[RMDB]
RNA sequence: GGGAACGACUCGAGUAGAGUCGAAAAGAUAUGGAAUCAGUAUGGAGAAUGCCAUCGGAAACGAUGGUAAUUCUAUGAAGUACGAUUCCUAAGUCAAAACGCUCUUGCGGUUCGCCGCAAGAGCGAAGCUAUUAUGUAGCUUCGGCUACAUAAUAGCAAAAGAAACAACAACAACAAC
Reactivity to 2A3 in 0.01 (KOAc 150mM, MgCl2 10mM, bicine 150mM(pH8.5), 24C), signal-to-noise 3, nucleotides 027 to 126: g000a010u010a010u050g000g020a010a000u010c040a100g020u010a010u040g000g020a000g020a020a000u010g000c000c000a000u000c000g010g000a020a000a000c000g000a010u000g000g000u010a040a020u000u020c020u060a300u040g000a000a010g000u000a000c000g000a000u000u000c000c000u000a000a000g000u000c000a030a030a020a150c030g010c000u020c000u010u000g000c000g020g170u070u100c300g060c140c000g030c010a020a000g000a010g000c000g000a010a000
Reactivity to DMS in 0.01 (KOAc 150mM, MgCl2 10mM, bicine 150mM(pH8.5), 24C), signal-to-noise 2, nucleotides 027 to 126: g000a000u000a030u020g010g010a030a000u000c010a120g030u000a000u000g000g010a000g000a020a000u000g000c000c000a000u000c000g020g000a000a010a020c000g010a010u010g000g000u000a000a000u000u000c000u010a300u030g010a140a260g000u000a000c010g010a020u000u010c000c000u000a000a090g000u000c010a120a100a080a300c010g020c000u010c010u000u000g020c000g030g010u000u020c280g020c020c000g020c010a020a000g000a000g020c000g010a010a080
This 177-nucleotide RNA was probed chemically with 2A3 and DMS. For DMS, 3,555 sequencing reads were counted. The data come from the RNA Mapping Database (RMDB), library TTRDES. For 2A3 the reverse transcriptase was SuperScript II with manganese. DMS (dimethyl sulfate) methylates the pairing face of unpaired adenines and cytosines.